[RMDB]
RNA sequence: GGGAACGACUCGAGUAGAGUCGAAAAGAUAUGGAUGCCUUGAAGAGCUCUCCGAAGAACUUUCUCGGAAACGAGAAAGGGAGGAGGCUUGGAGCAUCCUAAGUCAAAACACACGUUCGCGUGUGAAGCGCGUUAUUAUGUUCGCAUAAUAACGCGCAAAAGAAACAACAACAACAAC
Reactivity to 2A3 in 0.01 (KOAc 150mM, MgCl2 10mM, bicine 150mM(pH8.5), 24C), signal-to-noise 1, nucleotides 027 to 126: g010a020u090a030u190g010g000a010u030g010c100c030u170u150g160a230a090g040a020g100c100u140c010u000c300c000g120a250a040g000a030a010c000u030u010u000c000u000c030g000g060a190a130a050c060g000a020g000a010a010a000g000g000g020a040g000g010a020g000g000c000u010u020g000g010a040g080c000a030u000c010c010u000a090a000g000u000c020a010a120a130a020c030a000c000a010c010g040u050u090c300g040c030g060u000g000u010g040a030a070
Reactivity to DMS in 0.01 (KOAc 150mM, MgCl2 10mM, bicine 150mM(pH8.5), 24C), signal-to-noise 1, nucleotides 027 to 126: g000a030u000a300u050g010g000a010u040g000c010c300u000u000g050a150a130g000a060g000c020u020c020u000c000c000g000a100a180g090a130a180c010u020u000u000c020u000c040g000g000a070a150a110c000g030a000g000a020a000a000g000g000g010a150g000g000a100g010g050c000u010u000g010g000a100g030c000a000u000c050c000u000a020a130g000u020c030a110a100a160a170c010a000c000a010c000g000u000u010c200g000c020g000u000g000u010g000a070a190

Description:
The data come from the RNA Mapping Database (RMDB), library TTRDES. Structure probing data (2A3 and DMS) for a 177-nucleotide construct. Values cover nucleotides 27 to 126. 2A3 adducts were read by reverse transcription with SuperScript II with manganese. The DMS profile rests on 971 reads. For 2A3, 2,123 sequencing reads were counted. The reactions ran in a buffer of 150 mM KOAc, 10 mM MgCl2 and 150 mM bicine (pH 8.5), at 24 C.